RNA sequence: GGGAACGACUCGAGUAGAGUCGAAAAGGUGAGUGCGCAGCGCGAGGCGGAAGCCAUCGGCACGCUGCAUGAUGGCCGUAAGCCCUCCAUGCGCGACAUGUUCGAGGAUGUCUAUGCCGAAACGCCACCGACGCAUUACGUUCGCGUAAUGCGUCGGAAAAGAAACAACAACAACAAC
Reactivity to DMS in 0.01 (KOAc 150mM, MgCl2 10mM, bicine 150mM(pH8.5), 24C), signal-to-noise 2, nucleotides 027 to 126: g020g020u010g000a170g050u040g000c000g000c030a010g000c150g030c180g020a060g030g000c030g000g000a190a200g010c010c000a040u000c010g000g040c000a190c300g020c180u000g070c000a010u000g010a000u010g010g000c000c060g000u010a300a100g010c060c000c000u000c030c000a040u020g000c030g000c010g020a030c080a050u000g000u000u000c160g010a190g010g000a060u000g000u000c030u000a080u000g000c060c020g000a100a050a090c110g020c020c020a300
Reactivity to 2A3 in 0.01 (KOAc 150mM, MgCl2 10mM, bicine 150mM(pH8.5), 24C), signal-to-noise 1, nucleotides 027 to 126: g100g000u010g010a030g030u270g000c020g050c010a150g090c000g080c130g080a000g000g010c020g010g010a070a090g000c000c000a000u010c000g010g000c040a010c110g180c080u150g050c030a040u110g010a010u000g000g050c030c020g060u050a020a100g130c000c080c000u000c000c020a010u010g020c010g000c010g020a000c000a010u190g110u110u260c180g070a120g060g030a030u050g030u030c030u170a050u230g050c000c010g000a010a080a000c000g030c000c000a020
The record gives the reactivity of an RNA of 177 nucleotides to DMS and 2A3.
The data come from the RNA Mapping Database (RMDB), library OK2TST.
2A3 adducts were read by reverse transcription with SuperScript II with manganese.
The RNA was probed in 150 mM KOAc, 10 mM MgCl2 and 150 mM bicine (pH 8.5) at 24 C.